[RMDB]
Conditions: 150 mM KOAc, 10 mM MgCl2 and 150 mM bicine (pH 8.5), 24 C. An RNA of 177 nucleotides, treated with 2A3 and DMS and read out base by base. 2A3 adducts were read by reverse transcription with SuperScript II with manganese. The data come from the RNA Mapping Database (RMDB), library TTRDEL. Values cover nucleotides 27 to 126.
RNA sequence: GGGAACGACUCGAGUAGAGUCGAAAAGAUAUGGAACGGGUAGACAUGCCUAAAUCGGAAACGAUGGGCAACAGCUACACCGUUCCUAAGUCAAAGUUCAGAUGCAAGUUCGCUUGCAUCUGAACAACUAAUAGCGUACCUUCGGGUACGCUAUUAGAAAAGAAACAACAACAACAAC
Reactivity to 2A3 in 0.01 (KOAc 150mM, MgCl2 10mM, bicine 150mM(pH8.5), 24C), signal-to-noise 3, nucleotides 027 to 126: g010a030u050a030u110g000g010a000a000c000g020g000g000u010a000g060a120c040a110u050g000c000c020u130a270a280a110u010c000g000g000a050a030a000c000g000a010u020g040g000g000c030a040a050c090a090g020c010u010a000c070a070c020c000g000u010u000c000c000u000a010a020g010u010c060a160a020a050g000u000u000c000a010g000a010u000g010c000a000a030g010u060u170c270g120c200u000u020g000c000a000u000c000u010g000a000a000c000a000a000
Reactivity to DMS in 0.01 (KOAc 150mM, MgCl2 10mM, bicine 150mM(pH8.5), 24C), signal-to-noise 5, nucleotides 027 to 126: g000a030u000a280u010g000g010a010a010c000g010g000g000u000a010g010a070c080a210u000g000c000c010u000a050a070a050u000c000g010g000a070a070a130c000g000a010u000g000g020g010c000a020a060c300a150g010c010u000a010c010a130c000c000g020u000u000c000c000u000a010a060g010u000c040a090a110a090g000u000u000c010a000g000a010u000g010c000a020a010g010u000u020c260g010c000u000u010g000c000a000u010c000u000g000a000a000c000a060a140